[RMDB]
This 170-nucleotide RNA was probed chemically with 2A3 and DMS. It was measured as part of the RMDB library 15KLIB. For 2A3 the reverse transcriptase was SuperScript II with manganese. The 2A3 profile rests on 2,200 reads. Reactivities are given for positions 27 through 129.
RNA sequence: GGGAACGACUCGAGUAGAGUCGAAAACAACUGUUAUCUUGCCACUGCAUUGUUACCACUCCAACAAAUAGAGUUGAAGUUUAAUCCACCUGCUCUACAAAGGGCUGGUGAAGCUGCUAACUUUUGUCAAGGGACUCCUUCGGGAGUCCCAAAAGAAACAACAACAACAAC
Reactivity to 2A3 in 0.01 (KOAc 150mM, MgCl2 10mM, bicine 150mM(pH8.5), 24C), signal-to-noise 2, nucleotides 027 to 129: c000a000a000c000u130g000u160u070a150u150c060u040u070g050c100c000a090c010u010g030c000a020u000u030g000u060u050a000c000c010a000c060u000c080c000a010a020c020a010a150a050u220a040g160a020g010u030u000g000a120a000g000u090u000u130a120a000u050c020c020a060c000c000u020g000c030u000c020u010a080c150a040a130a040g000g000g000c120u000g010g000u000g010a000a000g050c080u070g000c050u070a030a000c000u170u030u080u060g060u020c060a170a060
Reactivity to DMS in 0.01 (KOAc 150mM, MgCl2 10mM, bicine 150mM(pH8.5), 24C), signal-to-noise 1, nucleotides 027 to 129: c070a010a130c000u030g010u000u000a110u020c040u020u000g040c070c240a110c280u000g100c000a060u020u020g000u000u030a000c170c080a080c000u030c000c000a120a100c000a190a000a060u020a020g020a000g000u040u040g000a000a030g000u020u080u060a170a070u090c140c080a120c000c000u000g030c050u010c000u000a000c300a000a090a000g140g000g010c140u080g000g070u000g000a000a000g010c100u010g000c000u000a010a050c020u000u000u080u000g000u080c000a050a020